[RMDB]
RNA sequence: GGGAACGACUCGAGUAGAGUCGAAAAAGUCAGUCGUUCGCGACUGACUGUUAAAUCAGAGUGGCGCAGCGGAAGCGUGGUGGGCCCAUAACCCACAGGUCCCAGGAUCGAAACCUGGCUCUGAUACCAUGCAUGGCAUUCCUUUCGAGGAAUGCAAAUGUUUAGAAGCAUUCGUGCUUCUAAACAUAAAAGAAACAACAACAACAAC
Reactivity to 2A3 in 0.01 (KOAc 150mM, MgCl2 10mM, bicine 150mM(pH8.5), 24C), signal-to-noise 5, nucleotides 027 to 156: a000g000u010c000a000g000u000c040g010u030u100c220g010c010g120a000c000u000g000a000c000u010g010u040u190a080a130a020u010c010a000g000a010g020u060g050g020c020g000c030a080g060c110g190g150a190a030g010c010g030u050g040g030u010g000g010g000c010c030c010a060u190a060a050c000c000c010a010c010a010g000g080u060c000c000c000a010g000g030a080u140c080g040a030a020a060c000c000u000g000g000c000u000c000u000g000a000u010a060c030c020a050u190g110c050a120u170g190g000c000a010u010u000c000c000u060u090u140c220g090a010g000g000a000a000u000g000c000a000a010
Reactivity to DMS in 0.01 (KOAc 150mM, MgCl2 10mM, bicine 150mM(pH8.5), 24C), signal-to-noise 4, nucleotides 027 to 156: a010g020u010c000a010g010u000c000g030u000u010c290g030c030g010a020c000u000g000a000c000u000g050u010u010a050a080a090u000c020a050g020a060g020u010g000g040c030g020c050a160g010c070g030g010a100a140g020c010g010u000g020g030u000g000g020g010c010c000c300a120u000a030a040c000c010c000a040c020a180g020g000u000c020c000c030a080g020g000a100u000c090g000a300a110a100c010c010u000g000g010c000u010c010u000g000a140u000a030c000c020a090u010g000c040a170u000g030g000c000a030u000u000c000c010u000u000u000c300g000a040g010g010a020a010u000g020c000a010a040